[RMDB]
About this RNA: Chemical mapping of a 177-nucleotide RNA with DMS. Values cover nucleotides 27 to 126.
RNA sequence: GGGAACGACUCGAGUAGAGUCGAAAAUGAAGUCUUCUCUACUGGUGCAUUAGGUCAAGGAGUUGCUAUUGAUCCAUUAGAAGGAGUGUUGUAUGCACCAGCAGAUGGUGAAUUAACAACAUUAUUACAAAAUAGUGGGGUUCGCCCCACUAUUUUGAAAAGAAACAACAACAACAAC
Reactivity to DMS in 0.01 (KOAc 150mM, MgCl2 10mM, bicine 150mM(pH8.5), 24C), signal-to-noise 3, nucleotides 027 to 126: u010g010a150a130g000u000c050u000u000c050u010c010u030a040c030u000g000g020u010g030c010a000u010u000a100g010g020u000c020a030a060g020g020a220g010u010u000g050c080u010a160u000u000g000a070u010c020c040a120u000u000a140g010a120a080g000g000a070g030u000g010u000u000g030u000a060u000g000c010a010c000c000a020g020c070a050g010a070u000g010g030u000g000a080a090u010u000a080a040c040a040a060c030a060u000u000a040u010u010a170